Chemical mapping of a 177-nucleotide RNA with DMS and 2A3. It was measured as part of the RMDB libraries RFM100 and RFMREP. Conditions: 150 mM KOAc, 10 mM MgCl2 and 150 mM bicine (pH 8.5), 24 C. Reactivities are given for positions 27 through 126.

RNA sequence: GGGAACGACUCGAGUAGAGUCGAAAAAUAAGCUCGGUGAAGUCGUGCGAAGCACACCCUAACGCUUAAUGGCGAGGAAAGAUUCGUAGAGGUACGGGUUGUGUGUGACAGUGCGGGUGGGGUUGCCCCCAUUUGUUUGAUUCGUCAAACAAAUGGGAAAAGAAACAACAACAACAAC
Reactivity to DMS in 0.01 (KOAc 150mM, MgCl2 10mM, bicine 150mM(pH8.5), 24C), signal-to-noise 8, nucleotides 027 to 126: a070u020a080a100g010c010u000c030g000g010u020g010a090a080g010u010c030g030u010g010c050g000a120a260g000c020a040c050a050c010c010c000u000a090a060c040g020c010u000u020a110a090u020g000g000c000g010a080g000g010a100a080a070g010a050u010u010c020g010u000a040g020a140g010g000u010a030c030g010g000g010u010u000g010u010g020u000g010u000g000a080c080a250g000u010g000c050g010g000g000u000g000g000g000g000u000u000g000c080c040
Reactivity to 2A3 in 0.01 (KOAc 150mM, MgCl2 10mM, bicine 150mM(pH8.5), 24C), signal-to-noise 9, nucleotides 027 to 126: a000u160a050a010g020c020u020c030g010g070u120g110a080a040g080u050c020g020u020g020c020g030a030a000g020c030a000c000a010c020c000c000u030a080a020c010g010c020u040u120a070a020u190g020g000c010g010a010g010g020a080a030a020g030a030u020u030c010g000u020a020g020a080g280g120u060a020c010g010g010g000u040u060g010u010g000u010g010u020g030a040c060a070g020u020g050c020g010g020g030u100g020g020g000g010u040u060g040c000c000